RNA sequence: GGGAACGACUCGAGUAGAGUCGAAAACGGCUAUGGCGCAGCCAGUGGCUGGAAAGCCACAUUGCGACACUGACACCGAGCGUUUUGCGUCGCGAAUGCCUCUCGCCGUUGCAUGGAUUUAGUGUCGUGAUGGAUUCCGCGCUGCACAUCUGCCUGGACCUACUCACUUGUUCGCAAGUGAGUAGGUAAAAGAAACAACAACAACAAC
Reactivity to 2A3 in 0.01 (KOAc 150mM, MgCl2 10mM, bicine 150mM(pH8.5), 24C), signal-to-noise 7, nucleotides 027 to 156: c040g010g000c000u010a000u020g030g000c110g000c040a010g010c010c010a040g020u020g030g010c020u040g120g120a130a080a000g010c000c000a010c000a000u000u020g000c000g000a000c000a000c000u020g010a010c010a030c100c010g060a080g040c040g020u020u050u230u180g030c010g030u080c060g030c060g130a160a040u160g040c030c010u030c010u020c010g020c020c010g050u080u090g020c050a080u100g000g100a080u060u100u160a030g010u000g000u000c000g010u020g010a010u010g010g060a050u260u050c090c010g020c070g000c010u000g010c000a010c000a000u060c140u080g000c000c010u020g020g040
Reactivity to DMS in 0.01 (KOAc 150mM, MgCl2 10mM, bicine 150mM(pH8.5), 24C), signal-to-noise 2, nucleotides 027 to 156: c030g030g000c000u000a050u000g020g000c050g080c040a060g020c040c040a130g040u010g040g030c040u000g030g020a100a180a080g000c000c040a150c010a090u000u020g010c010g010a020c000a040c010u000g010a080c080a260c050c030g000a160g050c060g010u030u000u000u000g030c000g030u000c040g000c070g000a110a110u010g010c030c000u000c010u010c030g010c060c030g020u000u030g030c070a090u010g030g000a300u000u000u010a060g020u000g020u000c030g000u000g010a050u010g030g000a220u010u010c050c020g010c020g040c000u000g020c010a030c030a080u010c100u000g020c020c010u000g020g030